[RMDB]
RNA sequence: GGGAACGACUCGAGUAGAGUCGAAAAAAGGUGCCAUCAUAUCGGUUAAGAACUCUUAACUCUGAUGGCUUUCGAGAUAUGUGGUGCAUUGAAGCUCUCCCUUCAAAUGGUCGUACAGUUCCGUGAAAGCCUACCAUUUAUUCGUAAAUGGUAGGCUAAAAGAAACAACAACAACAAC
Reactivity to 2A3 in 0.01 (KOAc 150mM, MgCl2 10mM, bicine 150mM(pH8.5), 24C), signal-to-noise 2, nucleotides 027 to 126: a000a010g110g020u070g000c040c000a010u030c000a020u080a050u240c060g020g010u000u000a030a010g060a280a240c060u020c000u300u000a000a000c020u020c010u110g020a000u030g000g060c000u000u010u010c020g030a010g000a000u060a020u100g040u040g020g030u040g030c020a050u040u050g070a030a000g000c000u000c010u040c040c020c010u010u020c020a020a040a060u090g040g000u010c020g010u020a030c030a070g000u020u020c040c000g040u100g040a130a020
Reactivity to DMS in 0.01 (KOAc 150mM, MgCl2 10mM, bicine 150mM(pH8.5), 24C), signal-to-noise 5, nucleotides 027 to 126: a070a060g010g020u010g020c010c000a010u000c010a050u010a110u010c230g010g000u000u000a000a020g000a210a160c300u000c010u000u000a010a000c020u000c100u000g000a020u010g000g000c050u000u000u000c030g000a120g020a040u020a040u000g030u000g000g010u000g020c030a080u000u000g000a080a050g000c070u000c060u000c060c060c010u000u000c060a030a050a070u000g010g000u000c030g010u000a060c080a050g010u010u000c020c020g010u000g000a080a110